RNA sequence: GGGAACGACUCGAGUAGAGUCGAAAACUUGACAAGCUAGCCGGAGGAGCGCCUAGGAACCCGAGCCGGAGCUCAGCGAGCGCAGCCUGCAGCUCCCGCCUCGCCGUCCCGGGGGGCGUCCCGCCUCCCAUGGUGCUGAUUUCGAUCAGCACCAUGGAAAAGAAACAACAACAACAAC
Reactivity to DMS in 0.01 (KOAc 150mM, MgCl2 10mM, bicine 150mM(pH8.5), 24C), signal-to-noise 6, nucleotides 027 to 126: c050u010u010g000a080c090a090a060g000c040u010a080g000c050c040g000g010a080g010g010a090g000c050g000c050c030u020a130g000g000a080a090c070c170c020g030a090g030c070c300g010g000a050g010c020u010c030a030g010c070g000a100g020c070g010c100a090g010c060c010u000g000c090a050g000c000u000c040c010c040g000c100c030u010c030g010c120c140g020u000c030c020c030g000g000g010g020g000g010c020g010u000c060c040c010g000c010c010u010c020
Reactivity to 2A3 in 0.01 (KOAc 150mM, MgCl2 10mM, bicine 150mM(pH8.5), 24C), signal-to-noise 7, nucleotides 027 to 126: c020u060u140g060a030c030a080a040g030c030u090a020g030c020c030g030g020a040g020g030a060g020c020g010c010c000u040a050g040g040a040a060c000c030c000g000a010g000c020c030g020g010a000g000c000u010c020a010g020c030g100a030g080c120g010c090a020g030c010c010u040g020c040a010g000c000u020c000c010c000g000c020c010u020c010g030c030c020g030u040c020c010c000g050g020g010g020g000g010c000g030u080c020c000c010g020c000c000u010c000

An RNA of 177 nucleotides, treated with DMS and 2A3 and read out base by base. The RNA was probed in 150 mM KOAc, 10 mM MgCl2 and 150 mM bicine (pH 8.5) at 24 C. Values are in units of 0.01, from 0 to 300, in steps of 10.